[RMDB]
RNA sequence: GGGAACGACUCGAGUAGAGUCGAAAACGACAAGGGUGUAAAGAUCGCUCUUUUACUCGGCAUGAUACCACCGUUAUCGGGUCAACAGAGUAGUUGCAAAUGACAACAAUGCUCAGGGGUAUGCUCUAAAAGUUCGUACCCUUCGGGGUACGAACAACAACUCCUGAUCGUUCGCGAUCAGGAGUUGAAAAGAAACAACAACAACAAC
Reactivity to 2A3 in 0.01 (KOAc 150mM, MgCl2 10mM, bicine 150mM(pH8.5), 24C), signal-to-noise 2, nucleotides 027 to 156: c110g090a010c040a030a000g060g010g020u010g110u180a130a140a040g100a150u190c020g020c050u020c020u040u100u040u040a130c090u030c000g000g000c000a000u090g000a000u060a020c030c000a010c000c010g050u080u020a030u080c040g000g000g000u010c000a020a040c050a050g040a000g040u060a010g000u020u040g040c040a140a150a170u180g050a120c000a020a000c010a080a060u120g000c010u020c030a020g010g030g000g010u070a020u160g020c010u060c030u160a050a080a000a020g010u000u000c000g000u000a000c000c000c000u000u000c100g010g000g020g000u000a000c000g000a000a000c000a000a000
Chemical mapping of a 207-nucleotide RNA with 2A3. The data come from the RNA Mapping Database (RMDB), library M2RFPK. The reactions ran in a buffer of 150 mM KOAc, 10 mM MgCl2 and 150 mM bicine (pH 8.5), at 24 C.